[RMDB]
RNA sequence: GGGAACGACUCGAGUAGAGUCGAAAAAGGCUAAUCCUGAAUAGCGUUCUCACCCUGGAGUGGGGAGAACGUGAAAUGCUCCGGCGCCAGAGGAUGUGGCUGCGGCCGAUUAGGUAGACGGUGGGGUCGCGUAUGAAGGCUUCGGCCUUCAUACGCGAAAAGAAACAACAACAACAAC
Reactivity to 2A3 in 0.01 (KOAc 150mM, MgCl2 10mM, bicine 150mM(pH8.5), 24C), signal-to-noise 1, nucleotides 027 to 126: a000g030g000c000u000a050a090u100c000c010u000g100a000a100u020a070g000c000g000u000u000c020u070c020a300c000c000c000u070g220g060a190g280u110g050g000g000g000a000g000a000a000c020g000u000g000a070a020a000u050g000c000u000c070c000g100g020c000g060c040c030a020g000a090g000g070a150u130g040u000g070g000c020u030g000c000g090g030c000c020g120a120u000u200a000g000g000u070a000g090a160c100g030g050u000g050g040g000g060u010
An RNA of 177 nucleotides, treated with 2A3 and read out base by base. The data come from the RNA Mapping Database (RMDB), library RFM100. The 2A3 profile rests on 410 reads. 2A3 adducts were read by reverse transcription with SuperScript II with manganese. The RNA was probed in 150 mM KOAc, 10 mM MgCl2 and 150 mM bicine (pH 8.5) at 24 C.